[RMDB]
RNA sequence: GGGAACGACUCGAGUAGAGUCGAAAACGAGCUUGAGCUGCGAGCCGAGAGGCGAUCUCGUAAACACGCACUUAAAUAUAACUGGCAAAACUAACAGUUUUAACCAAAACGUAGCAUUAGCUGCCUAAUAAGCGCAGCGAGCUCUUCCUGACAUUGCCAAGACUUCUACGUUCGCGUAGAAGUCUUGAAAAGAAACAACAACAACAAC
Reactivity to DMS in 0.01 (KOAc 150mM, MgCl2 10mM, bicine 150mM(pH8.5), 24C), signal-to-noise 1, nucleotides 027 to 156: c130g030a140g030c050u000u000g040a100g050c010u010g000c030g000a200g010c140c040g000a140g050a130g030g030c080g000a150u000c030u020c050g000u000a040a080a120c080a090c050g000c030a090c120u000u000a080a140a220u020a080u000a030a090c120u010g010g000c070a080a050a100a060c060u010a090a150c060a190g010u000u000u000u000a010a250c130c130a000a140a120a000c070g000u000a050g050c070a140u000u010a070g050c040u000g010c010c010u010a140a070u010a050a030g020c000g010c000a100g000c000g000a000g000c030u000c020u000u000c000c000u020g010a090c070a150u000u000g000c090
Reactivity to 2A3 in 0.01 (KOAc 150mM, MgCl2 10mM, bicine 150mM(pH8.5), 24C), signal-to-noise 4, nucleotides 027 to 156: c060g000a000g000c020u040u080g120a010g020c010u000g000c010g020a040g090c070c000g000a000g000a010g020g040c020g060a200u020c000u000c010g260u240a000a040a000c010a010c010g010c000a080c100u170u170a020a240a030u220a100u050a100a050c040u020g030g000c030a030a040a040a120c060u080a030a020c020a050g000u020u010u040u080a100a100c070c060a050a010a010a060c040g050u030a010g030c020a060u050u040a060g010c030u020g010c010c010u140a220a140u210a290a020g050c020g000c020a000g000c000g000a000g000c000u000c000u010u010c010c000u010g020a030c040a170u050u240g020c020
Chemical mapping of a 207-nucleotide RNA with DMS and 2A3. The reactions ran in a buffer of 150 mM KOAc, 10 mM MgCl2 and 150 mM bicine (pH 8.5), at 24 C. Values cover nucleotides 27 to 156. For 2A3, 2,363 sequencing reads were counted.